Background: An RNA of 177 nucleotides, treated with DMS and 2A3 and read out base by base. It was measured as part of the RMDB library OK2TRN. For 2A3 the reverse transcriptase was SuperScript II with manganese. The 2A3 profile rests on 1,210 reads. The RNA was probed in 150 mM KOAc, 10 mM MgCl2 and 150 mM bicine (pH 8.5) at 24 C. The DMS profile rests on 1,321 reads.
RNA sequence: GGGAACGACUCGAGUAGAGUCGAAAAGCCGGCGCUAUAGCGCCGAUGCCGAUAUAUGCCGAUGCAUUACGUAUAAUUACGCGUACGUAAUCGUACGUACGGCGCGCAUGCUAUAUAGCGCGCAUUAUCGUCAGACAGGUUUCGACCUGUCUGACGAAAAAGAAACAACAACAACAAC
Reactivity to DMS in 0.01 (KOAc 150mM, MgCl2 10mM, bicine 150mM(pH8.5), 24C), signal-to-noise 1, nucleotides 027 to 126: g010c060c000g020g000c000g030c010u000a070u000a160g020c040g010c030c020g010a030u020g020c030c060g000a070u000a080u010a060u000g010c010c050g040a100u010g020c060a000u010u000a010c000g010u000a030u000a050a030u010u000a020c080g010c300g030u000a060c080g030u000a030a040u000c040g030u010a000c000g010u000a020c120g000g020c000g000c020g050c140a110u000g000c020u000a100u000a060u000a040g000c010g010c070g020c060a020u020u000a050
Reactivity to 2A3 in 0.01 (KOAc 150mM, MgCl2 10mM, bicine 150mM(pH8.5), 24C), signal-to-noise 2, nucleotides 027 to 126: g050c020c010g000g000c010g000c030u160a030u120a300g000c030g000c000c020g020a010u020g020c000c050g060a010u020a000u010a010u230g000c010c060g150a080u110g010c080a040u020u120a010c000g010u050a030u040a080a090u080u040a050c110g090c190g160u110a160c010g010u010a020a110u080c040g020u000a000c020g000u010a020c020g040g000c010g000c000g000c020a050u160g030c020u080a070u030a010u050a240g000c030g000c000g030c020a010u050u070a070